[RMDB]
RNA sequence: GGGAACGACUCGAGUAGAGUCGAAAAAAUUAGUAUUUUUUAAGGCAAGUAACAACUCUUCUUUAGCAUUACGCAUAUUACGCAUAGUAUAUUCUCAUACUGAAUUAAUUUGGCGCGACCGAUGGGAGCCCUCAUGCUCAUUCGUGAGCAUGAGGGCAAAAGAAACAACAACAACAAC
Reactivity to DMS in 0.01 (KOAc 150mM, MgCl2 10mM, bicine 150mM(pH8.5), 24C), signal-to-noise 1, nucleotides 027 to 126: a030a080u000u000a080g000u000a000u000u000u000u000u040u000a100a130g000g010c090a050a080g000u010a060a120c100a070a060c110u000c050u000u000c020u000u000u000a070g020c090a080u020u000a050c040g040c080a040u000a090u000u000a010c100g010c100a110u000a030g000u000a020u000a100u000u000c060u000c050a110u020a030c050u030g010a120a050u030u000a020a060u020u000u000g000g000c020g030c080g000a060c090c010g000a040u010g000g010g020a180
An RNA of 177 nucleotides, treated with DMS and read out base by base. The DMS profile rests on 758 reads. The reactions ran in a buffer of 150 mM KOAc, 10 mM MgCl2 and 150 mM bicine (pH 8.5), at 24 C. It was measured as part of the RMDB library OK2TRN. For DMS the reverse transcriptase was MarathonRT.